RNA sequence: GGGAACGACUCGAGUAGAGUCGAAAAUCAUUGGCUUCGCUGCGCGCUCCGUUGCCUAGGCUUCAGAUGCUUCGUACUGUUGCCAACGUUGCAAUUUCCAAACGCUAAUGCGAAAGUGUGCAAACAACGGAAUGACAAACUUCGGUUUGUCAUUCCGAAAAGAAACAACAACAACAAC
Reactivity to DMS in 0.01 (KOAc 150mM, MgCl2 10mM, bicine 150mM(pH8.5), 24C), signal-to-noise 2, nucleotides 027 to 126: u010c060a090u000u000g020g020c060u000u020c070g010c110u010g000c180g000c220g010c040u000c130c080g000u010u000g000c040c010u020a170g010g000c000u000u000c010a050g000a100u010g020c060u000u000c140g000u000a070c040u000g000u000u000g020c000c010a020a080c250g010u010u010g030c080a020a120u010u000u000c090c140a040a150a150c060g030c010u030a060a130u000g010c040g000a000a010a070g000u000g010u000g030c080a090a060a020c100a090a150
Reactivity to 2A3 in 0.01 (KOAc 150mM, MgCl2 10mM, bicine 150mM(pH8.5), 24C), signal-to-noise 1, nucleotides 027 to 126: u110c030a000u080u060g090g040c030u020u030c030g000c080u020g030c000g030c020g000c050u000c000c040g000u000u040g030c000c000u030a050g040g000c000u000u030c000a050g020a230u160g000c030u090u040c050g050u040a050c000u030g000u070u020g000c030c000a030a020c050g150u150u080g040c030a030a020u000u000u090c010c000a080a020a050c010g000c020u050a070a050u100g020c000g040a040a010a010g050u080g030u030g000c070a010a070a080c030a070a060